Structure probing data (DMS) for a 177-nucleotide construct.
Source: RMDB library M2PK50, as collected in RNAgym.
Values cover nucleotides 27 to 126.
Conditions: 150 mM KOAc, 10 mM MgCl2 and 150 mM bicine (pH 8.5), 24 C.
RNA sequence: GGGAACGACUCGAGUAGAGUCGAAAACGCGGAUACUUCGGUAUCCGCGAAAGAAGCGAAGGCGUACCGAAAUAAAACGGUAAUAAAUGGCAAAACGCCUAAAAAGCCUAGACUUCGGUCUAGGCAACAAAUGCCAAAACUUCGGUUUUGGCAUUUGAAAAGAAACAACAACAACAAC
Reactivity to DMS in 0.01 (KOAc 150mM, MgCl2 10mM, bicine 150mM(pH8.5), 24C), signal-to-noise 1, nucleotides 027 to 126: c000g040c000g010g000a030u000a000c010u000u000c240g060g000u000a000u000c000c000g020c000g000a010a010a050g000a120a090g000c160g000a140a050g010g010c050g070u010a050c020c010g000a020a100a150u020a050a100a160a140c010g000g020u000a070a030u000a080a110a090u000g010g000c120a030a020a140a070c050g000c010c000u010a100a060a100a130a020g000c000c000u000a000g020a000c000u000u000c150g010g010u000c000u000a020g000g000c000a010a020